[RMDB]
RNA sequence: GGGAACGACUCGAGUAGAGUCGAAAAAGGUUUGAAAAAGUUCUACAAAGAAGUUAGAGCUUACCUAGGAAUCUCUUCUGCUUGUGACGGUCUUGCUUCAGCUUAUAGGGCGAAUUCCUUUGAUGUACACCAGGGUAGUUCGCUACCCUGAAAAGAAACAACAACAACAAC
Reactivity to DMS in 0.01 (KOAc 150mM, MgCl2 10mM, bicine 150mM(pH8.5), 24C), signal-to-noise 9, nucleotides 027 to 129: a040g020g000u010u020u050g010a050a060a050a050a040g000u000u000c010u040a040c030a080a130a120g000a100a080g010u050u010a020g030a020g040c010u000u000a000c020c020u000a080g000g000a100a070u000c040u020c040u040u010c030u040g000c110u000u000g000u000g020a030c120g040g000u030c050u010u010g020c050u020u020c000a080g020c080u020u020a090u030a040g000g060g000c070g000a060a110u020u010c010c010u010u030u020g030a080u030g010u000a080c130a120c170
Reactivity to 2A3 in 0.01 (KOAc 150mM, MgCl2 10mM, bicine 150mM(pH8.5), 24C), signal-to-noise 9, nucleotides 027 to 129: a010g100g020u100u080u110g090a040a030a010a000a000g000u000u000c000u010a020c040a040a230a050g240a140a030g120u120u050a000g000a000g000c000u010u020a020c000c010u000a030g040g080a080a060u050c020u000c000u080u020c020u040g060c030u050u070g040u040g040a030c040g030g060u040c030u030u070g020c010u030u040c010a020g010c000u050u070a100u170a190g040g010g020c030g030a040a040u040u050c010c000u030u050u090g130a130u100g060u080a030c060a030c070